RNA sequence: GGGAACGACUCGAGUAGAGUCGAAAACCUGGUUUAGGGUUCCAGGCUAGCCAUAUCUAUCGGUCGAGAUGCGAGCGCUUAAGCUCAAAUUGAGUGGCUGAGUUAGUGGUGAACGUAUCCCUAUGUUAAAACGGUAGCUGCUUCGGCAGCUACCGAACAACAUGAUCAACUUCGGUUGAUCAUGUUGAAAAGAAACAACAACAACAAC
Reactivity to DMS in 0.01 (KOAc 150mM, MgCl2 10mM, bicine 150mM(pH8.5), 24C), signal-to-noise 2, nucleotides 027 to 156: c010c020u000g000g010u000u000u000a070g010g000g020u000u000c040c010a050g030g020c010u000a280g000c000c070a040u000a060u000c090u000a110u010c020g040g030u010c010g000a300g000a020u010g000c300g020a060g020c000g000c290u010u010a080a160g030c020u000c000a050a210a080u000u000g000a210g050u030g000g030c000u000g010a100g010u000u000a110g030u010g010g010u000g000a080a100c070g010u000a110u000c000c000c000u020a170u020g000u000u000a050a060a080a150c010g010g010u000a010g030c020u000g020c000u010u010c300g070g010c000a030g000c000u000a010c000c010g050a000a030
Reactivity to 2A3 in 0.01 (KOAc 150mM, MgCl2 10mM, bicine 150mM(pH8.5), 24C), signal-to-noise 3, nucleotides 027 to 156: c000c000u020g010g020u050u040u050a030g020g000g010u060u000c010c000a000g020g000c040u040a010g010c000c000a020u040a050u090c050u050a120u060c010g010g010u020c030g020a020g010a120u020g000c020g000a010g000c040g050c140u200u270a100a080g000c000u000c000a000a030a010u020u020g010a020g040u210g040g000c000u010g000a010g020u040u110a050g020u020g020g000u030g040a090a020c040g030u110a090u150c000c000c000u020a050u060g090u050u140a050a090a050a060c010g000g000u000a000g000c000u010g000c020u030u080c180g110g010c000a000g000c000u000a000c000c000g010a000a000